[RMDB]
RNA sequence: GGGAACGACUCGAGUAGAGUCGAAAAAUGCAAGAGUUCUUGGAUGGUGCACAGGAGAAGGCACGCAAGCCAGACUGGCUGAAGCGGACCGUGCCGGGCGGGGACAAGUACACAGAGAUCAAGGCAACAAGGAGUUUUCAUUCGUGAAAACUCCUUGAAAAGAAACAACAACAACAAC
Reactivity to DMS in 0.01 (KOAc 150mM, MgCl2 10mM, bicine 150mM(pH8.5), 24C), signal-to-noise 2, nucleotides 027 to 126: a080u020g000c100a010a110g000a120g020u010u000c050u010u000g010g040a150u020g010g000u030g010c090a090c060a030g030g000a020g000a080a130g000g000c000a010c050g000c080a070a050g010c040c030a120g020a130c260u000g020g000c000u000g000a130a030g020c050g000g000a020c220c060g000u000g010c000c020g000g000g020c090g000g000g010g000a050c090a040a060g000u000a030c170a170c090a070g010a060g030a100u000c040a030a080g020g000c060a030a250
Source information: Chemical mapping of a 177-nucleotide RNA with DMS. Values are in units of 0.01, from 0 to 300, in steps of 10. The data come from the RNA Mapping Database (RMDB), library OK2TRN. The DMS profile rests on 1,110 reads. Reactivities are given for positions 27 through 126.